[RMDB]
Chemical mapping of a 177-nucleotide RNA with 2A3 and DMS. The DMS profile rests on 37,713 reads. It was measured as part of the RMDB library OK1LIB.
RNA sequence: GGGAACGACUCGAGUAGAGUCGAAAAGAAAAUAAGAGCGUAAUCGCGUCUUGACGUGAGUGAGCCCACACGAAUAGCUAUCCCAAGUGGGAUAACAUAGCUCACAAUACGCUAAGAUUCGUGUGAAAAUUUUACCAUUAUUCGUAAUGGUAAAAUUAAAAGAAACAACAACAACAAC
Reactivity to 2A3 in 0.01 (KOAc 150mM, MgCl2 10mM, bicine 150mM(pH8.5), 24C), signal-to-noise 9, nucleotides 027 to 126: g040a000a050a020a050u230a050a030g020a010g030c010g010u030a040a060u040c010g000c010g030u020c080u110u180g130a020c000g010u010g010a020g010u020g010a010g010c010c030c000a000c000a000c000g000a010a010u040a040g020c030u020a010u040c010c000c010a200a140g180u300g120g000g000a000u010a010a000c020a030u080a010g000c000u010c010a010c010a010a090u090a040c020g000c010u020a050a010g050a130u000u010c000g000u010g000u010g040a090a070
Reactivity to DMS in 0.01 (KOAc 150mM, MgCl2 10mM, bicine 150mM(pH8.5), 24C), signal-to-noise 9, nucleotides 027 to 126: g010a090a070a100a080u040a080a080g000a050g020c010g000u010a060a300u010c010g000c010g010u000c060u030u010g000a030c010g010u000g000a070g000u000g000a030g010c030c210c030a020c030a000c020g000a020a010u000a130g020c060u000a000u000c000c000c000a300a170g040u060g000g000g010a010u000a000a080c050a130u020a070g000c000u000c020a030c060a110a090u010a030c020g010c000u000a060a060g010a100u000u000c000g020u000g000u000g000a130a060